[RMDB]
The record gives the reactivity of an RNA of 177 nucleotides to DMS.

RNA sequence: GGGAACGACUCGAGUAGAGUCGAAAAGGUGCCUACGGCCAGGUCUGCAAGGCCGUGGUCCGCGGAACCAGCACGAAGGUGGCCAUCAAGAAGCUUGCCAGGCCCUUCCAGUCGGCGGUCCAUGCGAGUUGCUCGUUCUGUUCGCAGAACGAGCAACAAAAGAAACAACAACAACAAC
Reactivity to DMS in 0.01 (KOAc 150mM, MgCl2 10mM, bicine 150mM(pH8.5), 24C), signal-to-noise 1, nucleotides 027 to 126: g030g010u000g020c070c010u020a130c150g000g000c010c010a110g000g000u000c040u000g030c180a080a120g000g000c000c010g000u000g010g010u020c000c030g000c170g010g020a100a040c030c020a050g000c050a070c080g010a090a060g010g010u000g010g040c000c010a090u010c150a110a090g000a160a090g000c020u000u000g000c060c040a170g000g010c010c050c110u000u020c010c060a150g000u000c080g040g010c130g000g000u000c030c030a070u010g020c030g010a120

For DMS, 816 sequencing reads were counted. Values cover nucleotides 27 to 126.